Structure probing data (DMS and 2A3) for a 177-nucleotide construct. For 2A3, 5,511 sequencing reads were counted. The RNA was probed in 150 mM KOAc, 10 mM MgCl2 and 150 mM bicine (pH 8.5) at 24 C. DMS adducts were read by reverse transcription with MarathonRT.

RNA sequence: GGGAACGACUCGAGUAGAGUCGAAAAGAUAUGGAUAUCAUGAGCUAGCUACAUUUCGGAAACGAAAUGAUAGCUUGGACCUCAGAUAUCCUAAGUCAAAAGUUCUCGGUCGUUCGCGACCGAGAACGUGGCUAAUUUACUUCGGUAAAUUAGCCACAAAAGAAACAACAACAACAAC
Reactivity to DMS in 0.01 (KOAc 150mM, MgCl2 10mM, bicine 150mM(pH8.5), 24C), signal-to-noise 3, nucleotides 027 to 126: g000a030u010a240u010g000g000a000u000a000u000c010a120u000g000a010g000c090u010a030g030c000u010a020c000a000u000u000u010c000g000g000a090a020a120c010g000a010a010a020u000g010a160u000a000g000c000u000u010g040g000a070c300c000u000c000a040g010a020u000a020u000c000c000u000a020a050g000u010c010a100a140a160a290g000u000u000c000u010c010g020g000u000c010g020u000u010c290g010c020g020a010c010c000g000a000g000a000a000c000
Reactivity to 2A3 in 0.01 (KOAc 150mM, MgCl2 10mM, bicine 150mM(pH8.5), 24C), signal-to-noise 3, nucleotides 027 to 126: g000a000u020a040u120g010g010a000u010a020u030c170a300u120g000a000g050c100u160a040g000c010u020a040c000a010u000u010u000c020g040g000a060a030a040c010g030a000a000a000u020g020a110u000a000g000c000u000u120g010g100a010c040c010u000c010a010g010a000u000a000u000c000c000u010a090a000g020u030c020a050a000a050a300g000u000u010c000u000c000g010g030u000c020g020u050u110c300g030c030g150a030c030c010g010a010g000a000a000c000